[RMDB]
This 177-nucleotide RNA was probed chemically with DMS. For DMS, 1,255 sequencing reads were counted. It was measured as part of the RMDB library RFMREP. The reactions ran in a buffer of 150 mM KOAc, 10 mM MgCl2 and 150 mM bicine (pH 8.5), at 24 C. Reactivities are given for positions 27 through 126.

RNA sequence: GGGAACGACUCGAGUAGAGUCGAAAAAGAAAUCAAGAAUGAAGCAAGACAUUGAUUGAUAUGGUUGUUUUCGGUGCAUGUUUGAUUACUAAAAGUUGGGGCAUUCGAUGGUUUACAGAAGUCAUAAGUGACUAAGUAACUUCGGUUACUUAGUCACAAAAGAAACAACAACAACAAC
Reactivity to DMS in 0.01 (KOAc 150mM, MgCl2 10mM, bicine 150mM(pH8.5), 24C), signal-to-noise 2, nucleotides 027 to 126: a100g020a080a080a040u000c030a040a010g000a070a090u010g000a090a050g000c110a100a070g000a140c020a060u000u020g010a080u000u000g010a070u000a100u000g050g020u000u000g000u000u030u000u000c060g000g020u000g020c030a020u000g000u020u000u000g020a080u000u000a110c060u010a030a000a040a080g020u000u000g000g000g000g020c020a020u010u000c080g000a010u000g010g010u000u000u000a070c120a100g000a090a070g010u000c050a080u010a050a110